Source: RMDB library OK2TST, as collected in RNAgym. Structure probing data (DMS and 2A3) for a 177-nucleotide construct. 2A3 adducts were read by reverse transcription with SuperScript II with manganese. High 2A3 reactivity points to a flexible backbone, as in loops and unpaired stretches. For DMS the reverse transcriptase was MarathonRT.

[RMDB]
RNA sequence: GGGAACGACUCGAGUAGAGUCGAAAACUGUAAAUCCUGUCUUAAAUACGCCUCCGUAUGUGUCUGUGAAGUACGAGUUGACGCGUCCAGAGCGAUAGGGAUCAUCCUGACUCUUAUUCAUAACAUGCAUUAACCGCUUCUUCGGAAGCGGUUAAUGAAAAGAAACAACAACAACAAC
Reactivity to DMS in 0.01 (KOAc 150mM, MgCl2 10mM, bicine 150mM(pH8.5), 24C), signal-to-noise 2, nucleotides 027 to 126: c100u020g020u000a040a090a140u010c030c030u000g010u000c050u000u010a100a100a160u010a140c190g000c130c020u010c050c000g030u000a030u000g010u000g000u000c060u010g020u030g010a130a110g030u010a070c100g000a100g000u010u000g010a060c050g010c080g010u010c060c070a070g010a150g030c110g020a060u000a030g020g010g010a080u000c080a060u000c030c040u000g010a040c050u010c020u000u000a090u000u000c030a050u000a020a030c110a110u000g000
Reactivity to 2A3 in 0.01 (KOAc 150mM, MgCl2 10mM, bicine 150mM(pH8.5), 24C), signal-to-noise 1, nucleotides 027 to 126: c040u050g050u180a030a090a070u010c000c000u030g050u010c040u050u230a140a120a060u150a050c000g050c030c050u030c000c000g010u070a100u070g080u030g020u000c060u080g170u070g150a150a040g060u050a020c080g010a020g010u050u080g070a080c020g030c000g020u050c000c040a010g000a010g120c000g000a050u050a080g030g000g030a010u040c010a030u020c000c010u030g010a090c000u050c010u090u020a050u140u080c060a040u090a220a040c040a040u090g000
The 2A3 profile rests on 754 reads. DMS (dimethyl sulfate) methylates the pairing face of unpaired adenines and cytosines.